[RMDB]
RNA sequence: GGGAACGACUCGAGUAGAGUCGAAAAUCGGACGGCGGCCAUGAGUCGAAACGCAAAGCCGCGGCAAGUGGAGUUAGCGAGAAGAGACUAGGCUUUGGUUUCUUCAAGUGAAGCGGUCACCAAUCAGAAUAGCUUGCGCAGUUCGCUGCGCAAGCAACAUAUGGAUACGCUUCGGCGUAUCCAUAUGAAAAGAAACAACAACAACAAC
Reactivity to 2A3 in 0.01 (KOAc 150mM, MgCl2 10mM, bicine 150mM(pH8.5), 24C), signal-to-noise 3, nucleotides 027 to 156: u090c010g080g040a000c020g070g010c010g060g010c020c050a120u130g020a020g040u060c020g040a060a140a050c060g010c090a040a090a010g000c040c000g020c010g000g010c030a050a080g030u040g020g080a040g020u140u080a050g130c050g000a030g040a080a020g020a000g000a000c010u030a040g100g070c050u100u090u070g040g020u010u000u000c000u000u000c030a060a000g010u020g070a050a010g010c020g020g020u010c020a030c060c010a020a040u120c030a020g160a200a110u140a060g010c000u000u000g000c000g000c000a010g010u020u150c200g000c140u000g000c000g000c000a000a010g000c000a000a000
Reactivity to DMS in 0.01 (KOAc 150mM, MgCl2 10mM, bicine 150mM(pH8.5), 24C), signal-to-noise 2, nucleotides 027 to 156: u010c050g030g010a080c030g020g000c010g020g050c050c000a070u000g010a280g060u000c060g010a020a040a080c020g030c010a060a190a150g020c010c030g090c030g030g010c010a060a120g040u000g020g020a150g040u010u000a220g010c060g010a300g010a070a010g000a140g000a050c010u000a090g030g000c130u000u000u000g020g020u000u010u010c000u000u000c020a030a300g030u000g010a090a120g000c000g000g000u000c010a100c030c020a020a170u010c050a100g020a100a170u010a080g020c010u010u000g060c010g000c000a000g030u000u010c300g020c000u000g000c000g020c020a020a010g010c000a010a040
The record gives the reactivity of an RNA of 207 nucleotides to 2A3 and DMS. Conditions: 150 mM KOAc, 10 mM MgCl2 and 150 mM bicine (pH 8.5), 24 C. For DMS, 3,164 sequencing reads were counted. The data come from the RNA Mapping Database (RMDB), library M2RFPK.